[RMDB]
Chemical mapping of a 177-nucleotide RNA with 2A3 and DMS.
The RNA was probed in 150 mM KOAc, 10 mM MgCl2 and 150 mM bicine (pH 8.5) at 24 C.
High 2A3 reactivity points to a flexible backbone, as in loops and unpaired stretches.
Reactivities are given for positions 27 through 126.
For DMS the reverse transcriptase was MarathonRT.
RNA sequence: GGGAACGACUCGAGUAGAGUCGAAAAGAUGAAAUCGAUUCAGGGUUAGACAUCGAUGCAUUAAAAGUUGUAUCUAAAGGUAUUAACCAAAUGCGUGGGGAAAACUUUGGUGCAUUAAUGAUUACACAUAACCCGAAGGGUUCGCCCUUCGGGUUAUAAAAGAAACAACAACAACAAC
Reactivity to 2A3 in 0.01 (KOAc 150mM, MgCl2 10mM, bicine 150mM(pH8.5), 24C), signal-to-noise 5, nucleotides 027 to 126: g080a020u100g050a010a100a120u100c080g050a070u100u140c090a060g160g020g050u030u080a070g020a080c020a010u020c060g020a000u000g010c000a000u000u080a080a030a020a040g020u020u010g070u080a080u030c040u110a080a130a020g090g000u020a050u130u100a100a110c030c000a070a100a050u130g030c150g040u120g000g020g020g020a060a090a000a030c000u000u000u020g010g000u000g000c000a010u000u020a070a030u070g120a060u050u230a030c090a000c000
Reactivity to DMS in 0.01 (KOAc 150mM, MgCl2 10mM, bicine 150mM(pH8.5), 24C), signal-to-noise 4, nucleotides 027 to 126: g000a070u000g000a080a040a150u020c040g000a100u030u030c050a100g000g000g010u010u010a080g010a110c050a000u010c030g020a000u000g000c000a010u000u010a040a030a030a030g010u010u000g000u040a150u030c030u000a070a110a090g010g000u000a030u000u000a110a170c220c150a030a080a080u010g030c030g010u000g000g010g000g020a040a090a040a020c000u000u010u010g010g010u000g000c020a010u020u000a050a030u000g000a150u010u020a070c100a110c140